[RMDB]
RNA sequence: GGGAACGACUCGAGUAGAGUCGAAAAGAUAUGGAUCACCUCCCCACCCUCCGAUUCGGAAACGAAUUAGGAGGAGGGUGAGUCCUAAGUCAAAAGGGAUCUACCCACUUCGGUGGGUAGAUCCCAACACUACGCGUAUCUUCGGAUACGCGUAGUGAAAAGAAACAACAACAACAAC
Reactivity to DMS in 0.01 (KOAc 150mM, MgCl2 10mM, bicine 150mM(pH8.5), 24C), signal-to-noise 2, nucleotides 027 to 126: g000a090u000a230u000g000g000a260u000c000a010c020c000u000c130c000c010c040a300c090c010c000u000c000c000g000a030u000u000c000g000g010a130a050a140c010g010a000a010u010u000a070g110g030a010g010g040a030g010g020g000u010g000a150g010u000c010c020u000a050a130g000u030c110a070a100a080a210g000g000g000a010u000c000u000a010c050c000c000a010c010u000u010c190g020g010u000g000g000g040u000a000g010a000u010c000c000c000a010a030
This 177-nucleotide RNA was probed chemically with DMS. The RNA was probed in 150 mM KOAc, 10 mM MgCl2 and 150 mM bicine (pH 8.5) at 24 C.